Source: RMDB library OK1LIB, as collected in RNAgym. This 177-nucleotide RNA was probed chemically with 2A3 and DMS. The 2A3 profile rests on 10,215 reads. Reactivities are given for positions 27 through 126. For DMS the reverse transcriptase was MarathonRT.

RNA sequence: GGGAACGACUCGAGUAGAGUCGAAAACAUGCGCGUAAGAACAGCCGCGUUCAUUCAGAGUCAAGAGCCCUUCUGGUUCGUUGAGUGAAUGUAGAAAUAUACAUCUUACGACUGAGCGUCGGCGCGGUCUAGGCUGCGUGUUCGCGCGUAGUCUAGAAAAAGAAACAACAACAACAAC
Reactivity to 2A3 in 0.01 (KOAc 150mM, MgCl2 10mM, bicine 150mM(pH8.5), 24C), signal-to-noise 5, nucleotides 027 to 126: c050a030u160g010c050g000c000g070u080a110a010g020a110a040c030a040g020c000c010g000c000g010u010u010c000a000u020u000c010a010g010a010g130u020c020a040a030g000a010g010c030c020c000u150u100c110u170g020g010u000u000c010g020u170u060g000a000g000u040g000a060a040u000g000u020a000g070a090a230a000u300a010u020a030c020a030u010c020u040u020a020c030g020a040c050u070g050a040g070c050g050u140c060g070g030c010g000c010g010g020
Reactivity to DMS in 0.01 (KOAc 150mM, MgCl2 10mM, bicine 150mM(pH8.5), 24C), signal-to-noise 2, nucleotides 027 to 126: c080a060u040g000c040g010c020g000u010a060a080g010a040a080c140a190g010c010c010g000c010g010u000u000c000a000u000u000c010a040g000a030g000u000c030a000a020g000a020g000c020c030c230u010u030c140u020g000g000u000u000c000g000u010u000g000a010g000u000g000a140a040u000g000u000a010g000a300a300a300u150a070u010a030c090a050u000c040u010u010a100c070g020a040c080u010g010a060g010c030g010u040c030g020g010c000g020c030g020g000